[RMDB]
RNA sequence: GGGAACGACUCGAGUAGAGUCGAAAAACGACACAAUUCGUUGUGUCGUAAUGGUAAAGGCUAGGACCGGCCAGACAAAGGUCCGAAAAGAUCGAAAGAUCACACGCCACGAAUUCGUUCGUGGCAAAGCAUCGUAAAGUUUCGACUUUACGAUGCUAAAAGAAACAACAACAACAAC
Reactivity to DMS in 0.01 (KOAc 150mM, MgCl2 10mM, bicine 150mM(pH8.5), 24C), signal-to-noise 2, nucleotides 027 to 126: a030c010g000a000c000a010c000a000a030u000u000c210g030u000u010g000u000g010u000c000g020u000a010a030u010g010g010u000a120a130a090g020g010c010u000a110g000g000a010c010c010g000g020c010c010a120g010a140c200a020a060a130g000g010u000c000c010g000a060a020a120a100g000a000u000c010g000a110a110a130g000a010u000c000a100c230a090c160g010c010c000a000c000g000a010a020u000u000c170g010u000u020c000g030u010g000g030c000a000a020
Reactivity to 2A3 in 0.01 (KOAc 150mM, MgCl2 10mM, bicine 150mM(pH8.5), 24C), signal-to-noise 1, nucleotides 027 to 126: a000c000g010a000c000a000c000a030a000u080u050c130g030u080u020g000u000g010u020c000g000u000a010a070u080g000g020u080a040a120a130g010g000c030u060a060g020g030a010c000c000g000g000c000c040a020g000a060c110a030a160a000g000g020u010c000c000g000a010a020a000a010g030a000u010c000g010a030a060a020g020a000u030c000a000c000a010c100g020c000c010a000c000g000a000a020u090u040c130g060u100u000c000g000u050g000g000c000a000a010